[RMDB]
RNA sequence: GGGAACGACUCGAGUAGAGUCGAAAAUCUUCGUACUUCGGUACGAAGAAAAGGCCAACCCACUGGCGGAGGUGAAACCCAGCGUGGAGCGCACCAACGCGAAAACGGGGGGCUUCGGCCCCCCGAACAUUAUUACGGGUUUCGACCCGUAAUAAUGAAAAGAAACAACAACAACAAC
Reactivity to DMS in 0.01 (KOAc 150mM, MgCl2 10mM, bicine 150mM(pH8.5), 24C), signal-to-noise 4, nucleotides 027 to 126: u000c000u010u000c000g020u000a000c000u000u010c200g010g010u010a010c000g000a010a000g000a010a040a100a120g020g010c070c090a090a170c030c000c020a110c240u000g010g020c030g010g000a300g010g020u000g010a050a120a140c030c000c010a160g010c170g000u020g010g010a060g020c210g020c020a020c010c030a040a260c020g020c010g000a050a070a090a150c040g000g000g010g030g000g020c020u000u000c140g010g010c000c000c000c010c010c000g000a000a030
Reactivity to 2A3 in 0.01 (KOAc 150mM, MgCl2 10mM, bicine 150mM(pH8.5), 24C), signal-to-noise 2, nucleotides 027 to 126: u010c000u000u000c000g000u000a010c010u060u050c180g100g010u000a000c000g010a000a010g010a000a020a010a000g050g000c020c010a040a020c060c000c030a030c090u110g220g020c010g020g010a030g050g000u040g030a120a060a060c000c010c020a070g160c070g170u260g010g030a080g070c050g000c040a000c010c000a030a010c000g000c020g040a040a070a030a040c020g000g000g020g040g010g010c000u020u040c110g090g050c010c000c080c070c000c000g010a020a000

Chemical mapping of a 177-nucleotide RNA with DMS and 2A3. For 2A3 the reverse transcriptase was SuperScript II with manganese. It was measured as part of the RMDB library M2PK50.